The record gives the reactivity of an RNA of 177 nucleotides to 2A3 and DMS. It was measured as part of the RMDB libraries RFM100 and RFMREP. The reactions ran in a buffer of 150 mM KOAc, 10 mM MgCl2 and 150 mM bicine (pH 8.5), at 24 C. Reactivities are given for positions 27 through 126. DMS adducts were read by reverse transcription with MarathonRT.

[RMDB]
RNA sequence: GGGAACGACUCGAGUAGAGUCGAAAACACAUACUCCCUCCGUCCGGAAAUACUUGUCAUCAAAAUGGAUAAAAGGGGAUGUAUCUAGACAUAUUUUAGUUCUAGAUACAUCUCUUUUUAGUCACUUGCUCUACUAUAAAUUCGUUUAUAGUAGAGCAAAAGAAACAACAACAACAAC
Reactivity to 2A3 in 0.01 (KOAc 150mM, MgCl2 10mM, bicine 150mM(pH8.5), 24C), signal-to-noise 5, nucleotides 027 to 126: c070a000c000a010u090a060c020u020c010c000c010u030c000c000g030u000c010c020g070g060a070a080a000u130a080c030u070u120g070u080c020a070u030c030a110a100a130a180u160g050g010a020u020a020a000a000a000g000g010g000g000a000u000g000u000a000u000c000u010a000g030a030c040a090u190a210u110u270u140u150a100g030u130u020c000u000a010g000a000u000a000c000a000u000c000u000c000u010u000u000u000u010a010g010u010c000a020c060u010u020
Reactivity to DMS in 0.01 (KOAc 150mM, MgCl2 10mM, bicine 150mM(pH8.5), 24C), signal-to-noise 4, nucleotides 027 to 126: c110a080c150a080u020a120c080u000c010c010c000u000c020c050g020u010c040c030g000g000a080a080a080u020a030c100u000u010g010u000c070a050u000c110a070a040a100a120u010g020g010a040u000a000a000a000a010g010g000g000g000a010u000g020u000a010u000c000u000a000g000a010c020a140u000a070u030u020u010u010a160g000u010u000c000u000a000g000a020u000a000c000a000u000c000u000c000u000u000u000u000u000a030g030u000c020a090c200u000u010